[RMDB]
RNA sequence: GGGAACGACUCGAGUAGAGUCGAAAAAUCGAAAGAUGAAGUAUAUGGUCUGACACCUGCCCGGUGCUGGAAGGUUAAAAGGAGUAGUUAUCUUCGGAGAAGCUAUGAAUUGAAGCCCCAGUAAACGCACAUUUCUGUAGUUCGCUACAGAAAUGUGAAAAGAAACAACAACAACAAC
Reactivity to DMS in 0.01 (KOAc 150mM, MgCl2 10mM, bicine 150mM(pH8.5), 24C), signal-to-noise 2, nucleotides 027 to 126: a080u010c010g030a120a090a120g030a030u010g000a120a100g000u000a130u010a060u020g020g000u000c060u000g010a150c070a040c010c020u020g040c000c010c020g000g000u010g000c020u000g010g010a100a090g020g010u000u000a030a180a020a020g010g020a300g000u010a010g000u000u000a230u020c000u000u000c110g040g000a020g000a160a180g000c030u010a000u000g000a200a140u040u010g000a140a130g000c000c070c010c050a080g020u000a030a050a090c180g000
Reactivity to 2A3 in 0.01 (KOAc 150mM, MgCl2 10mM, bicine 150mM(pH8.5), 24C), signal-to-noise 1, nucleotides 027 to 126: a020u020c020g010a000a020a050g070a020u040g040a080a020g090u030a170u040a050u300g040g020u010c060u020g050a040c040a020c110c020u040g000c000c000c000g020g000u010g000c010u010g030g030a170a130g000g000u110u140a030a020a000a000g000g000a030g020u020a010g020u150u080a040u020c040u050u080c240g030g000a000g010a040a000g000c000u000a010u030g010a030a050u010u010g000a000a010g030c000c060c000c020a020g020u070a020a080a030c030g000
Source: RMDB library RFMREP, as collected in RNAgym. Structure probing data (DMS and 2A3) for a 177-nucleotide construct. For DMS the reverse transcriptase was MarathonRT. Conditions: 150 mM KOAc, 10 mM MgCl2 and 150 mM bicine (pH 8.5), 24 C. DMS (dimethyl sulfate) methylates the pairing face of unpaired adenines and cytosines.